[RMDB]
RNA sequence: GGGAACGACUCGAGUAGAGUCGAAAAAGGCAGGAGGAUUGCUUGAGCCCAGGAGCUUGAGGAUGCAGUGAGCCAAGGAAGUGAUGCCUUUAUGAGCUGGUAGAACUGGAAAGUAUCCUCAGUGGUGUAACGAGAGCAGAUUCGUCUGCUCUCGUUAAAAAGAAACAACAACAACAAC
Reactivity to 2A3 in 0.01 (KOAc 150mM, MgCl2 10mM, bicine 150mM(pH8.5), 24C), signal-to-noise 1, nucleotides 027 to 126: a030g030g000c000a010g000g050a070g090g050a130u130u020g000c030u040u060g070a030g020c030c000c000a020g090g030a080g000c030u080u120g000a000g030g010a000u010g070c000a010g070u030g120a000g060c030c010a030a010g020g010a030a060g070u060g070a060u110g030c020c000u000u080u040a240u270g070a060g060c040u000g020g060u080a070g040a110a010c020u000g000g080a120a000a090g060u020a000u030c020c000u000c020a030g010u070g010g090u140g030
Reactivity to DMS in 0.01 (KOAc 150mM, MgCl2 10mM, bicine 150mM(pH8.5), 24C), signal-to-noise 4, nucleotides 027 to 126: a070g000g020c020a060g010g020a130g000g010a130u010u000g020c020u000u010g010a110g020c000c020c030a100g000g020a160g010c070u000u010g020a040g010g020a050u000g040c040a060g010u010g020a170g020c040c050a050a070g020g010a110a060g000u000g010a130u010g000c040c040u000u000u000a100u010g020a150g020c100u000g000g030u000a040g020a300a080c010u000g000g010a050a090a090g000u000a070u000c010c030u000c030a040g030u000g010g000u010g020